[RMDB]
RNA sequence: GGGAACGACUCGAGUAGAGUCGAAAAGACAAAUGCAGCAUAUUAGGCUAAGCAGGAAAGGGACGGUAGCUCCUGGUGUCAGUUCAAACGGUGUGAUGCAUCUGCGUCGUGCACACAUGCACCCAAAGAACGCAUGGUAAUUCGUUACCAUGCGUUCAAAAGAAACAACAACAACAAC
Reactivity to 2A3 in 0.01 (KOAc 150mM, MgCl2 10mM, bicine 150mM(pH8.5), 24C), signal-to-noise 3, nucleotides 027 to 126: g060a000c020a000a070a020u110g000c020a010g000c010a040u060a110u240u160a110g100g000c040u060a050a040g030c020a010g080g040a100a050a020g030g010g020a020c030g040g030u020a010g000c020u010c020c020u040g010g040u030g020u030c060a040g000u100u060c030a090a050a030c080g000g000u020g010u020g030a130u040g000c000a020u010c040u120g050c010g040u120c020g000u050g000c000a010c010a000c010a040u060g060c010a070c000c010c010a040a110a010
Reactivity to DMS in 0.01 (KOAc 150mM, MgCl2 10mM, bicine 150mM(pH8.5), 24C), signal-to-noise 4, nucleotides 027 to 126: g000a090c090a030a080a100u000g010c030a060g030c040a060u010a140u010u000a070g000g010c020u010a070a130g020c040a060g000g000a040a080a050g010g000g020a090c080g000g020u000a050g000c090u000c020c020u010g000g010u000g000u000c040a050g000u010u000c120a050a090a100c150g000g000u000g010u000g010a120u000g000c030a050u000c070u000g020c100g010u010c090g000u000g020c020a000c080a030c080a050u010g010c070a100c010c020c040a040a100a140
An RNA of 177 nucleotides, treated with 2A3 and DMS and read out base by base. It was measured as part of the RMDB library M2PK90. Reactivities are given for positions 27 through 126. DMS adducts were read by reverse transcription with MarathonRT. The RNA was probed in 150 mM KOAc, 10 mM MgCl2 and 150 mM bicine (pH 8.5) at 24 C.